[RMDB]
RNA sequence: GGGAACGACUCGAGUAGAGUCGAAAAAACGUAAGACUCAAUUGUCCAUAAGGCAACACAAUGGCAAAGACUUCUUGCACUGCAAAACCAGGCAUGAGAAUGGCCUGUUUAAACGCAAGGACAUUGACAUGGUUCAAAAGUUCGCUUUUGAACCAUGAAAAGAAACAACAACAACAAC
Reactivity to 2A3 in 0.01 (KOAc 150mM, MgCl2 10mM, bicine 150mM(pH8.5), 24C), signal-to-noise 8, nucleotides 027 to 126: a000a000c160g050u160a090a030g060a070c010u000c060a030a150u110u080g020u030c010c010a030u060a190a100g080g000c020a150a070c080a040c020a180a150u110g030g000c030a090a110a020g050a090c020u050u030c000u010u050g020c070a090c170u050g030c050a050a090a010a040c050c010a000g020g000c000a010u080g060a040g110a180a110u280g100g020c000c010u010g010u010u020u020a100a100a000c090g000c020a030a020g010g000a020c000a030u020u020g010a010
Reactivity to DMS in 0.01 (KOAc 150mM, MgCl2 10mM, bicine 150mM(pH8.5), 24C), signal-to-noise 6, nucleotides 027 to 126: a080a020c100g010u040a060a080g020a110c270u010c060a070a080u010u010g000u010c040c000a080u020a140a160g010g010c070a110a040c160a060c140a080a070u020g000g010c010a080a060a080g010a100c150u000u020c040u000u000g000c010a100c070u010g010c120a050a070a060a050c260c030a020g000g000c000a020u000g000a090g010a160a090u040g010g000c010c000u000g010u000u010u020a070a080a130c170g000c010a060a030g000g000a050c070a040u000u010g000a140
The data come from the RNA Mapping Database (RMDB), library OK1LIB.
The record gives the reactivity of an RNA of 177 nucleotides to 2A3 and DMS.